RNA sequence: GGGAACGACUCGAGUAGAGUCGAAAAACAGAGUCUCUCUCUGUCACCAAGGCUGGAGUGCAGUGGUGCAAUCAUAGCUCACUGCAGUCUCGAACUCCUGGGUUCAAGGGAUCUGCCCACCUCAGCCUUCUAGGUAGCUAGGACUACAGGCACGUGAAUGACGAGGAUUAUUCGUAAUCCUCGUCAUAAAAGAAACAACAACAACAAC
Reactivity to DMS in 0.01 (KOAc 150mM, MgCl2 10mM, bicine 150mM(pH8.5), 24C), signal-to-noise 2, nucleotides 027 to 156: a070c030a070g000a070g020u000c090u000c160u010c020u010c010u010g000u000c070a140c040c030a080a050g010g000c020u000g000g030a020g010u000g010c010a020g030u010g000g050u010g030c040a140a180u000c220a140u000a190g000c020u000c020a020c010u000g010c010a010g010u000c020u000c040g020a080a070c040u010c030c020u020g000g000g000u010u000c070a080a080g020g000g010a130u000c020u000g030c040c030c040a010c040c010u000c020a170g020c010c010u000u000c070u000a070g000g050u010a050g030c020u000a080g010g000a070c000u000a020c010a060g010g050c030a080c060g010u010g020a090
Reactivity to 2A3 in 0.01 (KOAc 150mM, MgCl2 10mM, bicine 150mM(pH8.5), 24C), signal-to-noise 3, nucleotides 027 to 156: a010c030a010g020a010g110u060c050u030c020u000c000u000c020u200g030u030c020a040c040c030a020a030g030g000c030u010g030g010a040g030u020g000c010a010g030u020g020g100u200g060c030a050a130u180c040a080u230a090g000c000u000c020a000c000u000g000c020a000g010u020c000u010c030g030a040a040c020u020c010c020u050g020g000g030u020u020c040a120a150g070g000g020a080u010c040u100g030c020c000c020a040c000c030u030c010a010g010c020c000u060u010c080u070a060g020g060u000a010g010c030u010a040g040g030a020c000u030a020c040a020g010g100c070a010c110g160u210g110a120
Source: RMDB library OK3TST, as collected in RNAgym. An RNA of 207 nucleotides, treated with DMS and 2A3 and read out base by base. DMS adducts were read by reverse transcription with MarathonRT. High DMS reactivity at an A or C suggests that its Watson-Crick edge is free. For DMS, 5,096 sequencing reads were counted. Reactivities are rounded to 0.1 and cut off at 0 and 3. The 2A3 profile rests on 2,452 reads. Conditions: 150 mM KOAc, 10 mM MgCl2 and 150 mM bicine (pH 8.5), 24 C. 2A3 adducts were read by reverse transcription with SuperScript II with manganese.